[RMDB]
RNA sequence: GGGAACGACUCGAGUAGAGUCGAAAAACCUUAUUUUGAGAAGCUGAGGGAUUUGGCCCAAAGAAGCUUCAGCAACCGACUUUAAAUAGCACGGUGCUAAUACCAACGAGCAACUCGAAUGAUAAGUAAAACGUUGACAAGUUCGCUUGUCAACGAAGAUGUAAAUUCUGUUCGCAGAAUUUACAUCAAAAGAAACAACAACAACAAC
Reactivity to DMS in 0.01 (KOAc 150mM, MgCl2 10mM, bicine 150mM(pH8.5), 24C), signal-to-noise 1, nucleotides 027 to 156: a090c000c010u000u000a170u010u000u000u010g010a100g010a140a300g000c060u000g010a140g040g010g010a070u000u000u000g020g010c000c000c010a080a150a200g020a130a070g030c010u000u000c010a040g030c000a060a070c000c010g000a110c000u000u000u000a110a150a090u000a000g000c000a090c020g010g000u000g000c000u010a010a080u000a090c020c040a080a160c130g000a090g040c020a090a200c020u000c030g040a150a050u010g010a080u000a040a100g000u010a080a040a100a180c030g030u010u010g010a030c000a020a030g020u000u030c300g000c000u000u000g000u000c000a010a020c010g020a010a040
Reactivity to 2A3 in 0.01 (KOAc 150mM, MgCl2 10mM, bicine 150mM(pH8.5), 24C), signal-to-noise 3, nucleotides 027 to 156: a000c070c000u140u080a240u100u120u120u160g120a050g000a010a000g000c010u000g010a010g000g000g030a030u020u040u020g030g000c020c000c000a090a300a000g020a000a000g000c000u010u010c000a000g000c000a010a020c000c000g030a000c030u090u130u230a120a200a240u140a130g010c010a020c010g000g000u000g000c000u000a020a010u010a070c010c010a020a060c030g060a020g080c060a100a120c080u030c120g070a050a080u110g050a050u080a100a040g040u070a090a090a010a030c010g000u000u010g000a000c000a000a010g000u050u080c130g060c130u000u010g000u000c000a010a000c000g000a000a020